[RMDB]
RNA sequence: GGGAACGACUCGAGUAGAGUCGAAAAGAGGGCCGCGGUGCUCUGGAGUAGAGGCUCUGCCUUCGAAACACCAUCGAUCGUCCCCUCUUCUUUACCUUCUUUGGCUCUUCUUGGAGACGCGACCGGUGGCACCCCUGCUCGGUUCGCUCCAACCUGCGUUGUAUGUUGAGUUCGCUCAACAUACAACAAAAGAAACAACAACAACAAC
Reactivity to 2A3 in 0.01 (KOAc 150mM, MgCl2 10mM, bicine 150mM(pH8.5), 24C), signal-to-noise 4, nucleotides 027 to 156: g010a010g000g010g010c020c010g010c010g010g000u000g000c000u000c000u010g000g000a000g010u000a010g000a010g000g010c030u060c250u300g040c040c010u160u160c000g010a010a000a010c000a020c160c000a000u000c000g060a300u050c000g010u010c020c010c000c010u010c010u000u010c020u050u110u110a130c010c000u100u080c030u070u080u110g040g010c030u050c000u190u040c020u030u050g090g000a060g020a180c050g010c070g040a020c020c010g050g020u100g050g000c100a140c030c080c000c020u010g000c040u060c070g010g020u040u070c010g010c010u000c000c000a020a040c010c020u050g020c040
The data come from the RNA Mapping Database (RMDB), library VIROID.
The record gives the reactivity of an RNA of 207 nucleotides to 2A3.
For 2A3, 4,632 sequencing reads were counted.
Values cover nucleotides 27 to 156.